[RMDB]
RNA sequence: GGGAACGACUCGAGUAGAGUCGAAAAAAUAGACAACCACAACCAUAUACAGGGCUCUCUUUGUUCGAAUUAGGGCGUACAAUAUGGCUAACUAUGAACAAUAAACUAGCAUUGCAUAAUGGCAGUGUCCUUUACCAGAAUUCGUUCUGGUAAAGGAAAAAGAAACAACAACAACAAC
Reactivity to DMS in 0.01 (KOAc 150mM, MgCl2 10mM, bicine 150mM(pH8.5), 24C), signal-to-noise 4, nucleotides 027 to 126: a100a080u000a050g000a130c090a080a150c030c030a090c110a090a060c020c010a050u000a050u010a050c120a200g020g010g000c010u000c070u010c060u000u000u000g010u010u010c160g010a060a050u000u010a040g000g020g010c010g050u010a060c090a050a030u000a030u000g000g030c040u000a050a080c070u000a050u000g000a070a070c130a040a080u000a060a030a070c100u000a060g010c010a010u010u000g010c020a040u000a050a060u010g000g010c050a040g020u000g000
Reactivity to 2A3 in 0.01 (KOAc 150mM, MgCl2 10mM, bicine 150mM(pH8.5), 24C), signal-to-noise 2, nucleotides 027 to 126: a000a000u230a030g100a060c050a090a020c060c000a040c020a090a000c010c030a050u050a000u050a060c130a070g100g070g010c010u010c000u020c000u040u050u130g150u300u190c020g090a050a060u030u020a040g010g000g030c020g010u020a020c050a040a060u070a030u080g010g010c020u050a060a010c020u040a050u210g090a050a010c050a050a080u180a180a050a050c060u140a030g020c000a000u000u030g010c020a020u080a150a070u270g130g000c000a000g000u040g010
This 177-nucleotide RNA was probed chemically with DMS and 2A3. Values are in units of 0.01, from 0 to 300, in steps of 10. The RNA was probed in 150 mM KOAc, 10 mM MgCl2 and 150 mM bicine (pH 8.5) at 24 C. For DMS, 2,819 sequencing reads were counted.